Chemical mapping of a 177-nucleotide RNA with 2A3 and DMS. For DMS, 4,981 sequencing reads were counted. It was measured as part of the RMDB library RFM100. The reactions ran in a buffer of 150 mM KOAc, 10 mM MgCl2 and 150 mM bicine (pH 8.5), at 24 C.
[RMDB]
RNA sequence: GGGAACGACUCGAGUAGAGUCGAAAAUAUUCCAGUCUCUUCCCCUCCCCUUUUCCCCUCUCCUCCUUUCAGCUGCUGUUACUACGUGGAGUUUGGAGCCUAAGCUUUGAAAACUCCCAUGUGGCGCGACAAGCUGCAAAUUCGUUUGCAGCUUGUCAAAAGAAACAACAACAACAAC
Reactivity to 2A3 in 0.01 (KOAc 150mM, MgCl2 10mM, bicine 150mM(pH8.5), 24C), signal-to-noise 3, nucleotides 027 to 126: u240a050u040u030c010c000a020g040u000c000u010c020u050u020c000c000c000c000u020c000c010c000c000u010u000u030u010c000c000c010c000u010c010u010c010c030u040c010c000u060u120u100c020a060g000c000u060g020c000u040g060u080u050a060c030u030a030c040g140u160g000g010a010g020u000u010u030g020g000a000g000c010c060u160a180a040g010c020u030u010u060g080a050a030a000a000c000u000c000c010c000a010u020g000u010g010g010c010g000c000
Reactivity to DMS in 0.01 (KOAc 150mM, MgCl2 10mM, bicine 150mM(pH8.5), 24C), signal-to-noise 2, nucleotides 027 to 126: u040a080u000u000c010c020a150g010u010c020u010c030u010u010c030c020c020c040u000c020c010c010c000u000u000u000u000c030c000c010c050u000c040u010c020c000u030c020c020u010u030u040c080a040g000c030u010g010c020u010g000u000u000a100c030u010a060c100g050u020g000g000a040g010u000u000u000g000g000a030g000c010c230u030a100a140g020c000u000u000u000g010a120a080a020a020c030u010c070c000c010a030u010g000u000g000g010c120g020c200